[RMDB]
RNA sequence: GGGAACGACUCGAGUAGAGUCGAAAAGUCUGUGCGUUUCCAUUUGAGUAUCCUGAAAACGGGCUUUUCAGCAUGGAACGUACAUAUUAAAUAGUAGGAGUGCAUAGUGGCACGUAUAGCAGGCAUUGAGGCGAGGAUUGUUUCGACAAUCCUCGAACUACAGGAGCAGUUUCGACUGCUCCUGUAGAAAAGAAACAACAACAACAAC
Reactivity to DMS in 0.01 (KOAc 150mM, MgCl2 10mM, bicine 150mM(pH8.5), 24C), signal-to-noise 2, nucleotides 027 to 156: g030u010c060u000g030u000g000c020g000u000u010u020c000c020a090u010u000u040g090a110g020u000a110u000c050c030u010g010a040a080a080a160c060g020g010g060c100u010u000u000u000c000a070g040c110a050u000g010g030a070a020c010g030u000a020c000a050u010a050u010u010a110a090a110u000a110g010u000a110g020g000a100g030u020g010c030a130u000a060g000u000g010g010c050a020c040g060u000a060u000a060g040c030a010g030g030c010a090u000u000g010a100g040g000c040g000a010g000g010a050u010u010g010u000u000u010c190g010a100c030a020a020u000c030c000u000c000g010a020a070
Reactivity to 2A3 in 0.01 (KOAc 150mM, MgCl2 10mM, bicine 150mM(pH8.5), 24C), signal-to-noise 2, nucleotides 027 to 156: g070u020c050u010g000u000g000c010g000u010u150u030c020c010a010u060u020u070g020a010g020u070a090u110c000c020u050g050a020a050a090a090c160g010g050g000c020u060u060u030u030c060a040g060c030a010u000g000g000a000a000c000g000u000a000c010a000u010a000u000u080a050a070a060u090a000g050u020a020g010g040a070g000u070g040c050a100u070a130g110u100g120g000c010a010c050g010u010a010u010a030g020c030a000g060g000c040a050u020u160g050a060g050g060c020g000a000g000g000a000u010u010g020u040u100u040c100g020a000c000a010a020u000c000c000u000c000g000a010a000

The record gives the reactivity of an RNA of 207 nucleotides to DMS and 2A3. For 2A3 the reverse transcriptase was SuperScript II with manganese. Values are in units of 0.01, from 0 to 300, in steps of 10. For DMS, 3,942 sequencing reads were counted. The 2A3 profile rests on 2,094 reads. For DMS the reverse transcriptase was MarathonRT.